[RMDB]
RNA sequence: GGGAACGACUCGAGUAGAGUCGAAAAUGAAUACUCUCCUGUGACCGAUAGCGCACAAGUACCGUGAGGGAAAGGUGAAAAGCACCCCGGGAGGGGAGUGAAACAGUACCUGAAACCGUGCGCCCGCUUACGCCCCCUGAUUCGUCAGGGGGCGUAAAAAAGAAACAACAACAACAAC
Reactivity to DMS in 0.01 (KOAc 150mM, MgCl2 10mM, bicine 150mM(pH8.5), 24C), signal-to-noise 1, nucleotides 027 to 126: u000g020a040a020u010a050c050u020c000u000c000c020u000g000u020g010a100c010c000g020a100u010a030g000c000g030c000a030c040a110a110g030u000a190c060c030g040u070g060a170g020g000g000a030a130a180g000g000u000g000a050a040a130a260g010c000a010c020c000c030c000g000g110g000a140g000g000g010g000a030g020u000g000a170a130a180c230a050g030u020a020c040c000u010g070a080a050a170c090c080g000u000g000c030g000c100c000c000g000c100
Chemical mapping of a 177-nucleotide RNA with DMS. The RNA was probed in 150 mM KOAc, 10 mM MgCl2 and 150 mM bicine (pH 8.5) at 24 C. Source: RMDB library RFM100, as collected in RNAgym.